The record gives the reactivity of an RNA of 207 nucleotides to DMS and 2A3. 2A3 adducts were read by reverse transcription with SuperScript II with manganese. The 2A3 profile rests on 2,857 reads. Conditions: 150 mM KOAc, 10 mM MgCl2 and 150 mM bicine (pH 8.5), 24 C.
RNA sequence: GGGAACGACUCGAGUAGAGUCGAAAAGCAUAAUACCUAUCUAUAAGAUCAGGAUCCAUGUUCGAGCAUACUAGCAUAUUUGUAACUUCGUCGUACAGCGUUAGAUCAAUAGAAUAAACAAUCUUGUGGCGCAACUUUUUACGAUCUAGUUGUAUGAAACUACUAGCCAUUUCGAUGGCUAGUAGUUAAAAGAAACAACAACAACAAC
Reactivity to DMS in 0.01 (KOAc 150mM, MgCl2 10mM, bicine 150mM(pH8.5), 24C), signal-to-noise 3, nucleotides 027 to 156: g010c030a110u000a100a080u010a130c000c020u000a130u010c050u010a150u010a150a130g010a100u000c080a100g020g010a090u000c050c030a100u000g040u010u000c050g020a130g020c060a120u000a120c080u000a070g040c050a080u000a120u000u020u010g030u010a060a120c090u000u000c030g000u000c000g050u000a020c050a070g020c030g010u010u010a050g020a040u000c040a060a120u010a090g010a070a070u000a070a060a070c100a060a110u000c070u000u010g020u000g020g040c050g000c050a040a090c080u000u000u000u000u030a080c070g010a030u000c040u000a130g000u010u000g010u000a060u020g000a170
Reactivity to 2A3 in 0.01 (KOAc 150mM, MgCl2 10mM, bicine 150mM(pH8.5), 24C), signal-to-noise 4, nucleotides 027 to 156: g020c020a030u070a110a080u150a270c000c010u020a020u020c020u090a200u070a300a090g020a030u040c100a010g050g000a030u040c060c010a030u070g050u050u130c090g050a020g020c040a070u080a220c050u050a070g110c030a080u060a160u150u090u080g070u040a060a070c030u040u040c010g040u030c010g000u020a030c010a020g000c020g070u060u080a030g020a030u000c010a030a050u070a110g110a100a050u170a140a130a060c020a060a060u030c060u160u170g060u050g090g000c030g010c050a020a060c000u100u100u000u090u140a050c070g000a010u000c010u010a000g000u000u000g010u030a000u020g000a020